[RMDB]
RNA sequence: GGGAACGACUCGAGUAGAGUCGAAAAGCAACGCUGUGUCGUCGGUGUGCACGGUCAACCGUUCGCGCCGGUAGCGCACCGGCACGCCUUCGGCGCUGUCCAACCUGACCAGGUCGCGCUCGGAGAGUGUAUAGUCUAGGUUCGCCUAGACUAUACAAAAAGAAACAACAACAACAAC
Reactivity to DMS in 0.01 (KOAc 150mM, MgCl2 10mM, bicine 150mM(pH8.5), 24C), signal-to-noise 9, nucleotides 027 to 126: g010c090a080a080c090g020c100u000g020u000g010u000c080g020u000c020g010g020u000g010u000g010c020a120c020g010g000u000c110a100a120c100c080g010u000u000c080g020c120g000c050c000g000g000u000a060g020c050g010c040a040c010c010g010g010c010a020c040g010c070c060u000u000c020g010g000c020g010c010u010g010u010c040c060a130a100c060c030u000g000a130c150c120a110g000g010u000c090g010c070g000c010u010c030g010g000a070g010a160g010
Reactivity to 2A3 in 0.01 (KOAc 150mM, MgCl2 10mM, bicine 150mM(pH8.5), 24C), signal-to-noise 7, nucleotides 027 to 126: g040c030a040a080c070g020c120u060g010u030g020u160c080g010u010c000g010g020u010g010u010g000c030a020c060g010g020u070c070a120a130c130c070g150u210u170c090g010c030g010c050c000g020g010u060a020g000c020g000c010a000c010c020g000g000c000a000c010g010c000c010u020u030c010g020g000c010g000c050u090g030u010c020c010a050a060c030c040u110g090a140c030c070a030g010g010u040c010g000c010g010c030u110c050g020g010a040g000a010g050

About this RNA
Conditions: 150 mM KOAc, 10 mM MgCl2 and 150 mM bicine (pH 8.5), 24 C. An RNA of 177 nucleotides, treated with DMS and 2A3 and read out base by base. 2A3 adducts were read by reverse transcription with SuperScript II with manganese. Reactivities are given for positions 27 through 126.